[RMDB]
Record summary: This 207-nucleotide RNA was probed chemically with 2A3 and DMS. Conditions: 150 mM KOAc, 10 mM MgCl2 and 150 mM bicine (pH 8.5), 24 C. Source: RMDB library OK3TST, as collected in RNAgym. For DMS the reverse transcriptase was MarathonRT. Values cover nucleotides 27 to 156. 2A3 adducts were read by reverse transcription with SuperScript II with manganese.
RNA sequence: GGGAACGACUCGAGUAGAGUCGAAAAGCAUCCGACAUGGUGCUGGGAUGCGAAUAUCAGCACAUUACUCCUCGAGAAAGCAUGGGAGGAGGAUCAUCCAUGCAAUGGCUUUUGCCUAUCGUACCAUAGAGUCGUCGGUACGUAAGAUGACGACAGACCUCGUAUGAUGAUUCGUCAUCAUACGAGGAAAAGAAACAACAACAACAAC
Reactivity to 2A3 in 0.01 (KOAc 150mM, MgCl2 10mM, bicine 150mM(pH8.5), 24C), signal-to-noise 7, nucleotides 027 to 156: g040c030a060u070c030c050g070a080c090a110u130g030g020u030g030c020u030g020g010g010a060u070g030c070g020a040a020u110a040u120c020a000g010c020a010c010a030u020u060a060c030u020c020c000u010c000g010a030g040a080a070a010g030c020a020u030g020g020g010a040g030g020a040g010g010a010u080c010a010u010c020c010a000u010g000c000a020a170u090g020g000c020u080u160u200u300g000c000c000u030a050u080c020g000u010a020c000c010a040u090a120g090a000g030u030c010g000u010c030g010g050u060a060c030g020u020a020a030g020a060u130g010a010c020g000a000c010a010g100a050
Reactivity to DMS in 0.01 (KOAc 150mM, MgCl2 10mM, bicine 150mM(pH8.5), 24C), signal-to-noise 3, nucleotides 027 to 156: g000c010a130u020c020c010g000a110c040a300u000g010g020u020g020c000u000g020g050g010a120u000g000c170g000a160a080u020a100u000c020a070g020c010a050c040a110u000u000a100c030u000c050c010u010c030g000a170g010a120a100a160g030c080a070u010g020g020g010a030g020g020a080g010g000a080u000c010a100u000c060c000a060u000g030c070a120a130u000g030g020c010u010u000u000u000g080c020c030u000a110u000c030g000u010a030c030c000a120u010a100g020a110g020u000c000g010u010c040g010g000u010a020c070g040u000a040a100g020a190u020g000a050c050g000a050c030a110g000a150